[RMDB]
The record gives the reactivity of an RNA of 177 nucleotides to 2A3 and DMS. The data come from the RNA Mapping Database (RMDB), library OK2TRN. The RNA was probed in 150 mM KOAc, 10 mM MgCl2 and 150 mM bicine (pH 8.5) at 24 C.
RNA sequence: GGGAACGACUCGAGUAGAGUCGAAAACUAUUCACAAUUAACACCCCUGACUCUGAUAGUAGCUAUCAUUCUGCUUGUGGCGCACUACAUGUACUUGAUCCCAGGCCUACAAGCGGCAGCAGCGCGACGAGGUAGGAGGAUUCGUCCUCCUACCUCGAAAAGAAACAACAACAACAAC
Reactivity to 2A3 in 0.01 (KOAc 150mM, MgCl2 10mM, bicine 150mM(pH8.5), 24C), signal-to-noise 1, nucleotides 027 to 126: c040u060a100u200u250c100a040c020a120a130u140u150a220a010c030a090c090c000c000c020u040g040a040c030u040c030u080g030a070u040a140g130u070a040g010c000u080a050u110c030a080u170u000c020u050g000c000u020u020g000u030g050g020c070g040c080a070c080u110a080c010a090u120g080u080a070c050u060u140g010a030u040c030c010c010a000g050g000c000c000u050a040c030a000a010g040c010g010g000c000a000g010c000a000g060c020g030c030g070a080
Reactivity to DMS in 0.01 (KOAc 150mM, MgCl2 10mM, bicine 150mM(pH8.5), 24C), signal-to-noise 2, nucleotides 027 to 126: c090u010a050u000u000c090a070c110a070a090u010u000a050a080c080a180c050c000c030c030u000g010a070c060u020c100u000g080a060u000a040g030u000a060g000c050u000a090u010c060a080u000u000c050u000g000c000u000u010g000u000g020g000c150g040c030a060c090u000a090c080a040u000g000u010a050c080u000u000g000a100u000c000c020c050a070g020g000c040c000u000a050c070a070a050g030c050g030g010c140a050g020c100a040g000c000g000c040g040a130